[RMDB]
Structure probing data (2A3) for a 207-nucleotide construct.
Reactivities are given for positions 27 through 156.
RNA sequence: GGGAACGACUCGAGUAGAGUCGAAAACGGCCGGCAAGUCGUCCACCUCGGCGAAGGCUGCACCAGCGGCGAAGGCGAAGGCGGGCGAGUCGGCACCAGCCAAGGCCGCUAAGUCGUCCAGUGUGAAACCGUCUACCUCGAAUGUCACAUCGCCGCCCGCUACUACUUACUUCGGUAAGUAGUAGCGAAAAGAAACAACAACAACAAC
Reactivity to 2A3 in 0.01 (KOAc 150mM, MgCl2 10mM, bicine 150mM(pH8.5), 24C), signal-to-noise 1, nucleotides 027 to 156: c020g030g020c000c010g000g000c060a080a130g200u040c000g020u050c000c010a110c030c030u000c020g070g100c010g040a120a040g270g000c000u000g000c030a110c140c040a080g000c000g020g000c040g100a160a110g040g020c000g040a090a030g000g020c000g030g000g010c040g000a020g000u000c000g000g020c000a010c010c010a000g030c000c010a030a030g060g010c010c010g050c070u140a070a020g070u140c000g020u080c060c010a020g000u010g010u070g190a060a090a090c040c030g010u000c040u020a160c060c020u040c060g120a140a110u130g020u050c020a000c000a080u000c010g000c070c020g040c000c010